[RMDB]
RNA sequence: GGGAACGACUCGAGUAGAGUCGAAAAAGAGGAGGCUGGGUUUUGCGAUCUUUAAGCAGAUGGCAGGUUCACCCCGUACGGUGCGGAAGUUCGCGCUUCCGUGAAACGCGAAAAUCGGACGGUGCCUAAGACCAAUAACAGUUCGCUGUUAUUGGAACAUAAGCAGUAUGUUCGCAUACUGCUUAUGAAAAGAAACAACAACAACAAC
Reactivity to DMS in 0.01 (KOAc 150mM, MgCl2 10mM, bicine 150mM(pH8.5), 24C), signal-to-noise 3, nucleotides 027 to 156: a050g010a110g010g030a050g010g000c030u000g000g020g010u000u000u000u000g010c040g010a070u000c030u000u000u000a080a160g050c130a090g010a100u000g010g040c050a060g010g020u010u000c040a110c020c030c020c010g020u000a090c060g020g020u000g000c000g020g000a040a070g020u010u000c160g000c300g000c000u000u000c020c100g010u010g000a030a030a060c030g000c050g010a040a040a080a100u000c140g020g010a040c050g010g020u000g000c020c030u030a040a090g010a170c020c020a010a030u010a010a010c000a010g020u010u010c300g040c010u010g000u000u000a000u000u000g000g010a050a090
Reactivity to 2A3 in 0.01 (KOAc 150mM, MgCl2 10mM, bicine 150mM(pH8.5), 24C), signal-to-noise 3, nucleotides 027 to 156: a010g060a020g030g000a040g020g000c060u030g050g030g020u020u080u120u080g000c020g030a030u020c030u020u150u120a120a050g040c040a020g020a050u050g050g000c030a020g030g030u090u090c030a050c000c030c010c000g010u030a020c050g020g020u050g020c010g000g010a010a010g010u090u190c050g030c040g000c110u010u000c010c000g020u030g040a100a070a010c140g010c030g060a060a050a020a030u080c010g010g000a020c020g030g010u050g010c000c010u040a080a040g050a040c000c010a000a000u010a000a000c000a010g000u040u070c200g080c050u000g000u000u000a000u000u010g000g000a000a000
Structure probing data (DMS and 2A3) for a 207-nucleotide construct. In probing experiments dimethyl sulfate is read out at A N1 and C N3, which are open when not base-paired. 2A3 adducts were read by reverse transcription with SuperScript II with manganese. Reactivities are given for positions 27 through 156. The reactions ran in a buffer of 150 mM KOAc, 10 mM MgCl2 and 150 mM bicine (pH 8.5), at 24 C. It was measured as part of the RMDB library M2RFPK. DMS adducts were read by reverse transcription with MarathonRT.